An RNA of 177 nucleotides, treated with DMS and 2A3 and read out base by base.
For 2A3, 2,832 sequencing reads were counted.
The data come from the RNA Mapping Database (RMDB), library M2PK90.
2A3 adducts were read by reverse transcription with SuperScript II with manganese.
The reactions ran in a buffer of 150 mM KOAc, 10 mM MgCl2 and 150 mM bicine (pH 8.5), at 24 C.
For DMS, 3,725 sequencing reads were counted.
Values cover nucleotides 27 to 126.
RNA sequence: GGGAACGACUCGAGUAGAGUCGAAAAUAUUAUAGCGCACUAAAGACGCUGAUCUUUAGUUACCAAGGAACUUUAGUGCUGAGGUCCGUGUUCCAAGGUCCCAUGUCGGACCUUAGCACUAAUUGAAUACAUGGAAUACGUUCGCGUAUUCCAUGUAAAAAGAAACAACAACAACAAC
Reactivity to DMS in 0.01 (KOAc 150mM, MgCl2 10mM, bicine 150mM(pH8.5), 24C), signal-to-noise 4, nucleotides 027 to 126: u010a060u010u010a100u010a120g010c070g030c180a080c010u000a010a000a010g010a030c030g020c210u010g000a110u000c010u000u000u000a020g000u000u010a110c110c090a100a140g030g010a090a090c070u000u000u000a000g010u000g010c000u000g000a000g000g010u000c000c000g030u010g010u010u000c200c110a060a110g010g000u010c000c020c010a150u000g000u010c010g000g000a020c000c000u000u000a000g010c010a010c000u000a010a010u000u000g000a130a090
Reactivity to 2A3 in 0.01 (KOAc 150mM, MgCl2 10mM, bicine 150mM(pH8.5), 24C), signal-to-noise 3, nucleotides 027 to 126: u160a030u170u260a170u190a110g100c050g020c020a020c060u020a030a000a000g050a000c020g080c300u130g070a190u010c000u000u020u010a000g020u020u050a080c030c020a040a030g120g040a080a140c010u020u020u010a030g000u000g000c010u010g000a010g000g000u010c010c010g030u020g060u170u060c090c020a020a010g090g000u010c010c010c010a050u110g120u100c010g020g020a000c000c010u000u000a000g010c010a000c000u000a000a000u010u020g040a030a030